This 177-nucleotide RNA was probed chemically with 2A3 and DMS. The DMS profile rests on 4,167 reads. The RNA was probed in 150 mM KOAc, 10 mM MgCl2 and 150 mM bicine (pH 8.5) at 24 C. Source: RMDB library TTRDES, as collected in RNAgym.

RNA sequence: GGGAACGACUCGAGUAGAGUCGAAAAGAUAUGGAGUACAGUGCUCGAUAAGCUGGGUGUCGGAAACGACAUUAGCUUUUGACGAGCCUGUACUCCUAAGUCAAAAGGUGUUUCUUCGGAAACACCACUAGUUAUCCCAGUUCGCUGGGAUAACUAGAAAAGAAACAACAACAACAAC
Reactivity to 2A3 in 0.01 (KOAc 150mM, MgCl2 10mM, bicine 150mM(pH8.5), 24C), signal-to-noise 4, nucleotides 027 to 126: g010a000u030a010u090g000g000a010g010u000a010c010a000g030u050g300c000u020c060g180a230u060a300a000g000c010u090g180g120g130u030g020u010c000g000g010a010a020a010c000g000a000c000a000u010u030a000g000c020u070u090u130u300g300a300c080g000a000g000c000c000u000g000u000a000c000u000c010c000u000a000a000g000u000c000a000a010a030a170g000g010u010g000u020u010u010c030u040u120c300g140g010a000a000a010c000a000c000c000a010
Reactivity to DMS in 0.01 (KOAc 150mM, MgCl2 10mM, bicine 150mM(pH8.5), 24C), signal-to-noise 3, nucleotides 027 to 126: g000a010u000a110u000g000g000a040g000u000a000c000a010g000u010g020c000u020c000g030a120u030a020a010g000c000u000g020g040g020u000g020u000c000g010g000a020a030a060c000g020a010c000a030u000u000a030g010c000u000u000u000u000g000a200c080g010a010g010c020c000u010g010u000a000c000u000c000c000u000a000a080g000u000c020a130a090a170a140g030g010u000g010u000u000u000c000u000u020c240g030g010a010a010a010c000a000c000c000a030